Notes:
Conditions: 150 mM KOAc, 10 mM MgCl2 and 150 mM bicine (pH 8.5), 24 C. An RNA of 207 nucleotides, treated with 2A3 and DMS and read out base by base. Source: RMDB library OK3TST, as collected in RNAgym.

RNA sequence: GGGAACGACUCGAGUAGAGUCGAAAACUCAGUGUAAUGCAAGAGGCGUACCUGGGCACCAGAGGUAUAGAAUCAGGCCCACAGUCCUACCUGCAUUAUAAGGAUUAGAUGAUUGGGUACACAUAAAGCAUUUUGACUAUGUCUAGCACUCAGCACAUGAUUCCUUAGGUUUCGACCUAAGGAAUCAAAAAGAAACAACAACAACAAC
Reactivity to 2A3 in 0.01 (KOAc 150mM, MgCl2 10mM, bicine 150mM(pH8.5), 24C), signal-to-noise 6, nucleotides 027 to 156: c020u000c020a040g020u020g020u090a020a010u010g000c010a000a010g010a010g040g020c060g050u080a070c060c050u040g000g010g000c040a140c110c090a100g030a070g030g100u280a120u110a220g230a100a060u050c030a020g000g030c000c020c000a010c010a010g070u130c020c000u030a140c010c000u020g000c010a010u020u010a030u040a030a020g050g010a050u080u110a100g080a130u110g020a070u030u080g040g000g010u080a050c050a000c000a050u090a090a180a020g020c050a060u090u080u100u200g040a050c030u020a030u110g040u020c040u030a020g000c010a020c040u090c030a010g040c070a030c010a110
Reactivity to DMS in 0.01 (KOAc 150mM, MgCl2 10mM, bicine 150mM(pH8.5), 24C), signal-to-noise 3, nucleotides 027 to 156: c050u000c060a140g030u000g050u010a040a040u000g010c030a040a100g000a100g000g010c060g040u010a050c050c030u000g010g030g030c030a090c040c040a140g020a140g000g010u000a240u000a080g010a150a160u000c030a110g000g020c010c040c020a050c090a090g010u000c020c020u020a090c050c020u000g020c060a080u000u000a010u000a080a100g030g010a160u000u000a080g020a180u010g020a090u010u000g040g010g050u000a050c050a060c030a140u000a070a080a090g000c020a100u000u000u000u010g030a100c050u000a060u000g010u000c020u000a090g000c020a070c020u010c020a170g000c010a070c060a130